[RMDB]
RNA sequence: GGGAACGACUCGAGUAGAGUCGAAAAAGCUCCUUCUCGGCUAUUCGCUUUUUCUUCCUUUCCUCUACCCACUGCUCGAGGGCCUCCUCCCUCGCCUUCGAGCCGGGUCUUGCAUCGGGUUGGCUCAUAGGUCCUGUCUUCGGACAGGACAAAAGAAACAACAACAACAAC
Reactivity to 2A3 in 0.01 (KOAc 150mM, MgCl2 10mM, bicine 150mM(pH8.5), 24C), signal-to-noise 3, nucleotides 027 to 129: a000g020c010u020c050c000u090u030c040u040c040g030g010c000u090a080u120u090c030g020c000u080u020u000u020u020c030u020u030c020c000u010u030u010c000c010u000c030u020a050c000c000c000a080c100u130g020c000u000c000g020a020g000g010g000c000c020u090c020c010u090c010c020c000u040c000g020c010c020u000u000c000g010a000g000c010c000g020g010g010u000c020u030u070g000c010a060u030c000g000g000g000u040u050g030g020c020u030c030a060u070a080g090
Reactivity to DMS in 0.01 (KOAc 150mM, MgCl2 10mM, bicine 150mM(pH8.5), 24C), signal-to-noise 3, nucleotides 027 to 129: a110g000c060u000c030c020u010u030c000u040c080g000g070c150u000a120u000u000c100g000c030u030u070u020u040u010c080u030u000c060c030u000u000u000c020c000u040c050u020a090c020c040c030a140c100u000g030c000u020c000g040a080g020g010g040c050c090u000c090c100u020c000c000c010u020c150g040c020c060u000u040c050g060a050g050c040c030g010g040g020u030c070u010u050g020c080a070u000c050g030g000g070u000u050g000g080c040u020c040a000u020a110g030
Chemical mapping of a 170-nucleotide RNA with 2A3 and DMS. It was measured as part of the RMDB library 15KLIB. For DMS the reverse transcriptase was MarathonRT. For 2A3, 8,431 sequencing reads were counted.